RNA sequence: GGGAACGACUCGAGUAGAGUCGAAAAGAUAUGGAGCAUGAUUGACAUGCCACUCGGAAACGAGAAUGGCAACAGCAAUAUGCUCCUAAGUCAAAUCAUGCCAUACGGUUCGCCGUAUGGCAUGAAAGACAAGGAUUAGCUUCGGCUAAUCCUUGUCAAAAGAAACAACAACAACAAC
Reactivity to DMS in 0.01 (KOAc 150mM, MgCl2 10mM, bicine 150mM(pH8.5), 24C), signal-to-noise 2, nucleotides 027 to 126: g010a050u010a300u000g010g000a010g010c000a010u000g000a030u000u010g010a070c070a190u000g000c000c000a040c000u010c010g010g000a100a050a170c000g000a010g000a040a100u000g010g000c010a000a070c300a100g030c000a020a000u000a010u000g000c000u010c000c010u000a010a080g000u000c030a080a120a180u000c010a000u000g010c000c000a020u000a010c020g000g000u000u000c220g040c020c000g010u000a000u010g000g000c010a000u000g010a010a090a120
Reactivity to 2A3 in 0.01 (KOAc 150mM, MgCl2 10mM, bicine 150mM(pH8.5), 24C), signal-to-noise 2, nucleotides 027 to 126: g020a010u040a000u120g000g010a010g000c030a010u100g090a090u300u040g060a200c050a080u040g020c010c000a000c000u020c010g000g000a020a070a040c010g010a000g020a150a300u090g020g030c010a050a060c110a120g050c010a000a000u020a000u030g000c000u020c010c000u020a030a000g010u000c030a040a140a070u030c000a000u010g020c010c000a000u000a000c000g070g050u030u100c300g060c100c000g000u010a000u000g020g000c020a010u000g000a010a000a020